This 177-nucleotide RNA was probed chemically with DMS and 2A3. The reactions ran in a buffer of 150 mM KOAc, 10 mM MgCl2 and 150 mM bicine (pH 8.5), at 24 C. It was measured as part of the RMDB library M2PK50. 2A3 adducts were read by reverse transcription with SuperScript II with manganese.

[RMDB]
RNA sequence: GGGAACGACUCGAGUAGAGUCGAAAAUCGUGCCCGUUCGCGGGCACGAGUCACCUACACCGCUUCCAGUCUGCGCCACUACCUCUCUAUGAGAUCUCAGUAUAUUUGGUCAGUUCGCUGACCAAAAUCAUUGAAUUACCUUCGGGUAAUUCAAUGAAAAAGAAACAACAACAACAAC
Reactivity to DMS in 0.01 (KOAc 150mM, MgCl2 10mM, bicine 150mM(pH8.5), 24C), signal-to-noise 4, nucleotides 027 to 126: u000c010g020u000g000c000c000c010g040u000u010c170g020c000g030g010g020c000a000c000g000a000g000u010c100a090c010c010u000a100c120a100c070c060g010c030u000u010c040c020a070g010u000c020u000g000c060g000c030c010a070c050u000a070c050c020u000c030u000c040u000a070u000g010a140g010a090u000c010u010c050a130g000u010a100u010a150u010u000u000g000g000u000c000a000g030u010u010c220g020c010u000g000a010c000c000a000a000a020a110
Reactivity to 2A3 in 0.01 (KOAc 150mM, MgCl2 10mM, bicine 150mM(pH8.5), 24C), signal-to-noise 3, nucleotides 027 to 126: u010c010g000u000g000c000c020c020g000u050u050c240g030c000g070g010g050c000a000c010g000a000g000u010c020a050c040c000u040a030c050a050c030c020g040c040u060u010c040c010a040g030u050c010u040g030c020g050c020c020a070c030u050a060c010c010u020c000u000c010u050a070u160g050a040g020a060u040c030u030c050a040g080u130a130u030a090u300u030u020g020g000u010c010a000g010u050u090c220g020c080u010g000a000c000c000a000a000a000a010